[RMDB]
This 177-nucleotide RNA was probed chemically with 2A3 and DMS.
The reactions ran in a buffer of 150 mM KOAc, 10 mM MgCl2 and 150 mM bicine (pH 8.5), at 24 C.
Source: RMDB library M2PK50, as collected in RNAgym.
The DMS profile rests on 2,935 reads.
RNA sequence: GGGAACGACUCGAGUAGAGUCGAAAAUAAGUCUUCUUCGGAAGACUUAAAAUAAGCUGACCAAGCUAUGAGGUCAAUAUCGUCAAGCACAAUAGAAUAAAAAGCCGAAAAGGUUCGCCUUUUCGAACAUUUCAAUAGUGUUCGCACUAUUGAAAUGAAAAGAAACAACAACAACAAC
Reactivity to 2A3 in 0.01 (KOAc 150mM, MgCl2 10mM, bicine 150mM(pH8.5), 24C), signal-to-noise 4, nucleotides 027 to 126: u050a000a000g010u020c000u000u000c000u030u060c200g030g010a000a000g000a000c000u000u000a000a000a000a020u160a050a010g060c070u040g020a040c000c020a050a030g000c040u080a110u230g080a040g000g010u020c060a050a070u110a050u130c090g050u040c040a050a030g040c030a030c030a110a140u120a080g110a080a010u180a150a210a050a030a010g090c080c010g000a000a010a010a000g030g000u030u050c070g050c000c010u000u000u000u000c010g010a040a000
Reactivity to DMS in 0.01 (KOAc 150mM, MgCl2 10mM, bicine 150mM(pH8.5), 24C), signal-to-noise 4, nucleotides 027 to 126: u000a000a020g000u000c000u000u010c000u000u020c220g050g000a010a010g010a010c000u010u000a000a050a100a110u010a090a110g020c100u000g020a130c030c020a080a140g000c040u000a050u010g020a240g000g000u030c040a040a090u000a030u010c090g010u000c040a060a070g030c070a020c150a040a050u010a050g000a110a070u010a040a090a090a070a110g000c190c020g010a000a000a010a000g010g010u000u010c180g010c010c010u000u000u000u000c000g010a090a140